[RMDB]
RNA sequence: GGGAACGACUCGAGUAGAGUCGAAAACGUCAACCCAGAGCCCCACCGCGGCUAAUGCAAGAGGCCAAAAAAUGUUUGGAGGAAGAAAAACAAAGGCAGGAAGUGGCGGCGGCCUGACGGUGCGUGUUACGGAGAGACCGUUCGCGGUCUCUCCGUAAAAAGAAACAACAACAACAAC
Reactivity to 2A3 in 0.01 (KOAc 150mM, MgCl2 10mM, bicine 150mM(pH8.5), 24C), signal-to-noise 1, nucleotides 027 to 126: c000g040u020c060a070a020c000c000c000a000g040a070g000c000c000c020c030a050c000c000g000c060g000g000c040u030a050a070u000g000c000a040a000g050a040g140g000c060c050a000a000a000a000a030a130u260g100u120u090u120g150g020a170g040g040a120a030g040a000a210a060a000a000c140a090a080a050g050g000c020a010g000g170a130a000g080u030g020g000c000g000g000c000g000g050c000c010u040g080a150c000g000g000u010g050c070g020u050g030u000

Background:
Chemical mapping of a 177-nucleotide RNA with 2A3. The RNA was probed in 150 mM KOAc, 10 mM MgCl2 and 150 mM bicine (pH 8.5) at 24 C. For 2A3 the reverse transcriptase was SuperScript II with manganese. The data come from the RNA Mapping Database (RMDB), library RFM100.